[RMDB]
RNA sequence: GGGAACGACUCGAGUAGAGUCGAAAAGCGUACUACAUCCGUAACACUUCCAACAGCUAUACCCACUGCAAAUCCCAAAUAGGAUUUGCAUGGUAUAGACAUGGAAGUGGAGAAGGAUGUAUCGCAAAAUCCCCUAUUAGUUCGCUAAUAGGGGAAACAAUGCUGAGUGAUUCGUCACUCAGCAUUGAAAAGAAACAACAACAACAAC
Reactivity to DMS in 0.01 (KOAc 150mM, MgCl2 10mM, bicine 150mM(pH8.5), 24C), signal-to-noise 3, nucleotides 027 to 156: g050c020g020u000a050c040u000a000c000a000u000c000c010g010u000a140a300c000a000c010u000u000c010c000a050a140c090a200g030c000u000a010u000a000c040c010c050a120c300u000g010c000a000a020a010u000c000c000c010a090a180a200u000a050g020g030a040u000u000u000g010c000a000u000g000g020u000a000u000a000g000a030c040a300u010g000g010a020a010g040u000g010g000a060g040a220a300g010g000a020u000g000u000a000u000c000g030c000a050a080a110a170u000c000c010c000c000u000a010u000u000a000g010u010u000c300g060c010u000a010a010u000a020g050g010g040g000a000a000a010
Reactivity to 2A3 in 0.01 (KOAc 150mM, MgCl2 10mM, bicine 150mM(pH8.5), 24C), signal-to-noise 4, nucleotides 027 to 156: g000c010g050u120a080c040u010a000c010a000u000c000c010g010u020a030a020c000a000c000u000u000c000c010a060a040c050a220g010c010u000a000u010a000c000c000c020a140c040u000g000c000a000a000a010u030c000c010c030a230a280a190u300a170g000g000a000u010u000u010g010c000a000u050g000g000u000a000u000a000g010a000c010a020u040g000g000a000a000g000u000g000g000a010g010a020a000g010g000a010u000g000u000a010u010c010g000c000a000a040a030a130u020c000c000c000c000u000a000u000u010a000g040u020u070c290g010c170u000a000a000u000a010g000g000g000g000a000a000a000
Notes:
The record gives the reactivity of an RNA of 207 nucleotides to DMS and 2A3. For 2A3, 5,489 sequencing reads were counted. 2A3 adducts were read by reverse transcription with SuperScript II with manganese. Values cover nucleotides 27 to 156.